[RMDB]
RNA sequence: GGGAACGACUCGAGUAGAGUCGAAAAUUGGGCAUCCUUGACGGUGUAAAGCUCCGGCGGUGCAGGAUGAGCCCGCGGCCUAUCAGCUUGUUGGUGAGGUAAUGGCUCACCAAGGCGACGACGGGUAAAGUGACCAUUUCUUCGGAAAUGGUCACUUAAAAGAAACAACAACAACAAC
Reactivity to DMS in 0.01 (KOAc 150mM, MgCl2 10mM, bicine 150mM(pH8.5), 24C), signal-to-noise 1, nucleotides 027 to 126: u000u000g030g000g020c010a070u000c000c020u000u000g000a030c030g000g000u000g010u000a130a130a280g020c120u000c030c050g000g010c060g060g020u010g000c180a070g000g000a090u000g000a210g010c000c000c010g060c260g000g020c010c030u000a030u020c060a090g020c010u010u020g010u000u000g000g020u000g030a040g020g020u000a070a100u000g010g000c000u000c000a000c000c010a000a030g000g020c000g000a080c150g000a000c020g010g000g030u000a090
An RNA of 177 nucleotides, treated with DMS and read out base by base. Reactivities are rounded to 0.1 and cut off at 0 and 3. It was measured as part of the RMDB library OK2TRN. The DMS profile rests on 1,043 reads. The reactions ran in a buffer of 150 mM KOAc, 10 mM MgCl2 and 150 mM bicine (pH 8.5), at 24 C.